The record gives the reactivity of an RNA of 177 nucleotides to 2A3 and DMS. The DMS profile rests on 1,485 reads. The reactions ran in a buffer of 150 mM KOAc, 10 mM MgCl2 and 150 mM bicine (pH 8.5), at 24 C. 2A3 adducts were read by reverse transcription with SuperScript II with manganese.
[RMDB]
RNA sequence: GGGAACGACUCGAGUAGAGUCGAAAAAAAAAACACUAGAGCUGACAACUAGCUGCAGUGACCAGCAGCACACAAGCUGAGCUAGGUGGGAGCUGCGCUGAGCAGCAGCACAGCCAUCAGCAAAAAAUCCGAUUAUAAAGUUCGCUUUAUAAUCGGAAAAAGAAACAACAACAACAAC
Reactivity to 2A3 in 0.01 (KOAc 150mM, MgCl2 10mM, bicine 150mM(pH8.5), 24C), signal-to-noise 1, nucleotides 027 to 126: a030a000a000a020a040a000c100a040c040u140a090g030a000g020c010u050g040a040c030a040a040c080u070a030g010c020u070g030c030a020g010u040g040a040c020c020a010g050c000a010g040c040a010c010a040c010a140a090g040c020u050g030a000g040c000u060a090g080g010u000g020g050g020a110g020c000u020g000c040g020c090u130g090a060g080c010a000g010c000a000g010c030a030c020a010g090c040c010a030u000c010a000g000c000a000a000a000a000a000a170
Reactivity to DMS in 0.01 (KOAc 150mM, MgCl2 10mM, bicine 150mM(pH8.5), 24C), signal-to-noise 2, nucleotides 027 to 126: a000a020a030a040a050a040c150a030c090u020a100g010a110g050c010u000g000a070c110a040a100c040u010a010g020c010u000g020c020a040g000u010g000a080c060c030a080g010c020a000g020c020a050c110a040c130a110a110g020c040u000g020a050g000c020u000a030g000g030u000g010g000g010a110g010c000u000g000c020g020c060u010g010a190g040c160a080g010c000a020g010c020a040c050a070g000c020c010a110u000c000a010g020c010a000a030a090a080a030a040